This 177-nucleotide RNA was probed chemically with DMS and 2A3. For 2A3, 2,545 sequencing reads were counted. 2A3 adducts were read by reverse transcription with SuperScript II with manganese. The data come from the RNA Mapping Database (RMDB), library OK2TRN. Reactivities are given for positions 27 through 126. Reactivities are rounded to 0.1 and cut off at 0 and 3. DMS adducts were read by reverse transcription with MarathonRT. The DMS profile rests on 4,112 reads.
RNA sequence: GGGAACGACUCGAGUAGAGUCGAAAAUGCAUUUAGUGGAAAGAAGACUCCUUACAGGAUAGUCCAGAAAUCCAACUCUGGAUUUCUUUGGGUGAGAGCCAUAUCCUCAUAGUGGUAGACCUAAAUGUCCACAUAAAUACUUCGGUAUUUAUGUGGAAAAAGAAACAACAACAACAAC
Reactivity to DMS in 0.01 (KOAc 150mM, MgCl2 10mM, bicine 150mM(pH8.5), 24C), signal-to-noise 5, nucleotides 027 to 126: u010g010c020a010u000u000u000a030g030u010g020g020a090a100a080g000a150a130g000a050c030u000c130c020u000u000a150c280a020g000g010a050u010a050g010u000c060c070a040g000a020a030a030u010c030c060a050a170c280u030c190u000g020g010a020u000u000u000c010u000u020u010g010g010g000u000g010a120g010a110g000c030c030a120u000a030u000c010c000u000c060a090u000a060g020u010g000g010u000a040g020a100c050c010u000a020a030a050u010g000
Reactivity to 2A3 in 0.01 (KOAc 150mM, MgCl2 10mM, bicine 150mM(pH8.5), 24C), signal-to-noise 3, nucleotides 027 to 126: u130g010c010a000u020u040u020a060g010u090g070g080a150a100a090g120a050a060g040a080c010u010c030c000u050u040a070c090a020g040g000a050u040a020g030u020c030c020a000g000a030a010a010u000c010c000a040a140c150u120c150u160g000g000a010u000u030u010c010u100u100u130g030g000g030u040g030a080g020a000g050c000c030a040u020a030u080c000c010u010c030a060u060a100g040u030g040g030u030a020g030a090c010c000u000a040a020a020u060g060